[RMDB]
RNA sequence: GGGAACGACUCGAGUAGAGUCGAAAAAAGUUUUGAUAUGGAGGGAGACGAAGCGCAACAGCCCCGGAGUAUUCGGAAACGAAUACCCGGAGGACAUGCGUGAACACUCCCUCCUAAGUCUGUGGAACCAAGGAAGGAUGUUCGCAUCCUUCCUUGGAAAAGAAACAACAACAACAAC
Reactivity to DMS in 0.01 (KOAc 150mM, MgCl2 10mM, bicine 150mM(pH8.5), 24C), signal-to-noise 2, nucleotides 027 to 126: a140a040g010u010u000u030u000g020a070u010a300u010g000g020a020g010g000g000a010g030a240c110g000a230a260g000c000g010c000a030a050c110a230g010c050c010c020c000g000g000a130g010u000a030u000u010c010g010g000a090a070a160c010g000a030a000u000a000c000c000c000g000g000a100g010g010a010c140a090u000g000c020g000u010g000a000a130c300a170c010u000c000c000c000u000c000c000u000a010a060g000u000c020u010g010u000g000g000a160a190